[RMDB]
RNA sequence: GGGAACGACUCGAGUAGAGUCGAAAAGAGCUGAACGUGCCAAGGCCAUGUGGCCAUCUACCGCGCGCUGGCUCAGUGAACUGAAAGAUUGCCAACAUAUUUUUGCCAGUUCCAACAGCGAGGUGGCGUAGCCCCCUUUCUUCGGAAAGGGGGCUACAAAAGAAACAACAACAACAAC
Reactivity to 2A3 in 0.01 (KOAc 150mM, MgCl2 10mM, bicine 150mM(pH8.5), 24C), signal-to-noise 1, nucleotides 027 to 126: g020a000g000c120u100g030a060a060c050g080u060g000c050c000a060a110g000g000c000c000a150u300g100u300g250g070c010c000a060u090c030u090a100c030c000g000c030g000c000g020c050u030g020g050c060u100c050a030g020u120g100a020a000c040u000g000a030a010a010g040a100u010u110g170c100c120a100a000c030a190u140a010u080u070u030u060u070g070c000c100a000g020u080u000c000c010a070a030c000a000g140c010g040a020g070g000u050g000g000c040
Reactivity to DMS in 0.01 (KOAc 150mM, MgCl2 10mM, bicine 150mM(pH8.5), 24C), signal-to-noise 1, nucleotides 027 to 126: g020a010g010c010u000g020a040a000c140g020u000g040c010c050a160a170g020g010c010c030a240u000g090u030g030g090c000c040a050u000c090u010a040c110c130g030c080g050c000g010c020u010g000g010c000u000c110a150g020u000g000a030a010c020u000g000a080a020a050g000a050u030u010g010c110c160a050a160c110a050u000a010u000u000u000u020u000g020c130c020a010g010u000u000c020c010a060a090c080a030g010c040g020a060g010g000u000g010g010c180
Source information
An RNA of 177 nucleotides, treated with 2A3 and DMS and read out base by base. For DMS, 794 sequencing reads were counted. Values are in units of 0.01, from 0 to 300, in steps of 10. The data come from the RNA Mapping Database (RMDB), library OK2TST.